[RMDB]
RNA sequence: GGGAACGACUCGAGUAGAGUCGAAAAGAUAUGGAUACUAUUGGUCAGUGGCGAAGCGAUAAGCUCGUGUCGGAAACGACACCGUGAGCUUUUGACGCUUCGCCACUGACCAUUAGUAUCCUAAGUCGUAUAUUUAUUCGUUCGCGAAUAAAUAUACAAAAGAAACAACAACAACAAC
Reactivity to DMS in 0.01 (KOAc 150mM, MgCl2 10mM, bicine 150mM(pH8.5), 24C), signal-to-noise 3, nucleotides 027 to 126: g000a110u010a300u010g000g010a010u000a010c000u010a000u000u010g010g000u000c000a010g020u000g000g010c000g020a010a010g040c000g020a120u010a030a020g010c000u000c020g000u000g000u000c000g010g010a150a110a270c000g010a010c010a000c040c300g020u010g030a000g020c000u010u010u010u000g020a210c070g000c010u010u000c000g000c000c010a000c000u000g000a000c020c000a000u000u000a000g010u000a000u000c000c000u000a010a100g010u010c120